[RMDB]
RNA sequence: GGGAACGACUCGAGUAGAGUCGAAAAGAUAUGGACAGAGCAGAGGAACUACACCACAAUAUCGGAAACGAUAUUGGGUGCCGACGAAGCUCUGUCCUAAGUCAAAAGGUACACUUCGGUGUACCAAGUUUACAGUUCUGUUCGCAGAACUGUAAACAAAAGAAACAACAACAACAAC
Reactivity to 2A3 in 0.01 (KOAc 150mM, MgCl2 10mM, bicine 150mM(pH8.5), 24C), signal-to-noise 4, nucleotides 027 to 126: g000a020u040a020u120g000g010a000c000a010g010a020g020c010a000g020a050g060g040a100a090c120u260a090c220a010c010c030a170c010a280a010u000a000u000c010g000g020a040a040a040c010g010a010u000a000u020u000g000g000g000u010g000c010c040g190a300c030g040a020a000g010c000u020c000u010g000u000c000c000u000a010a000g010u000c000a000a000a050a210g000g000u010a010c010a000c010u050u170c300g110g020u000g000u000a000c000c000a000a000
Reactivity to DMS in 0.01 (KOAc 150mM, MgCl2 10mM, bicine 150mM(pH8.5), 24C), signal-to-noise 4, nucleotides 027 to 126: g010a040u000a300u010g000g010a000c000a010g000a000g030c010a050g000a300g010g010a080a060c100u000a280c020a000c000c000a130c010a000a000u000a010u000c010g020g000a100a040a180c000g010a010u000a000u000u000g000g000g010u000g010c060c080g010a120c110g010a290a230g000c000u000c000u010g000u000c000c000u000a020a070g010u000c050a060a060a080a110g000g000u000a010c000a000c010u000u020c180g040g010u000g010u010a020c000c000a010a020